[RMDB]
RNA sequence: GGGAACGACUCGAGUAGAGUCGAAAACUCGGGACUCUUCGGAGUCCCGAGAAAAGAAUUUUUGAUUAGCGCCUGUGGUAACACGGGCCAUUAUGGAAGAAAAGAUCAAACACUUCGGUGUUUGAUCGGAUGUUACUUAGUUCGCUAAGUAACAUCCAAAAGAAACAACAACAACAAC
Reactivity to DMS in 0.01 (KOAc 150mM, MgCl2 10mM, bicine 150mM(pH8.5), 24C), signal-to-noise 3, nucleotides 027 to 126: c000u000c000g020g020g000a020c010u000c010u000u010c170g040g000a050g000u000c000c010c000g000a000g010a010a020a080a170g000a110a070u000u020u000u000u000g010a140u000u000a100g040c190g000c000c000u000g020u000g020g000u020a100a180c010a010c010g010g000g010c010c010a000u000u000a070u010g000g010a070a080g000a080a070a100a140g010a020u000c000a000a010a010c000a010c000u000u010c180g020g010u000g010u000u000u000g000a000u010c000
Reactivity to 2A3 in 0.01 (KOAc 150mM, MgCl2 10mM, bicine 150mM(pH8.5), 24C), signal-to-noise 3, nucleotides 027 to 126: c010u010c000g000g000g000a000c030u040c060u100u110c300g050g010a020g020u010c000c010c000g010a000g010a000a000a000a000g020a020a040u080u110u120u210u220g110a120u050u110a040g030c040g000c130c000u000g000u010g020g050u070a100a010c010a000c010g000g000g000c010c000a000u020u080a060u100g070g050a040a010g050a070a230a030a050g000a000u000c000a000a000a000c000a000c010u040u110c190g110g000u000g000u000u000u010g000a000u010c000
Record summary:
The record gives the reactivity of an RNA of 177 nucleotides to DMS and 2A3. Conditions: 150 mM KOAc, 10 mM MgCl2 and 150 mM bicine (pH 8.5), 24 C. The data come from the RNA Mapping Database (RMDB), library RFMREP. High 2A3 reactivity points to a flexible backbone, as in loops and unpaired stretches. For 2A3, 4,477 sequencing reads were counted.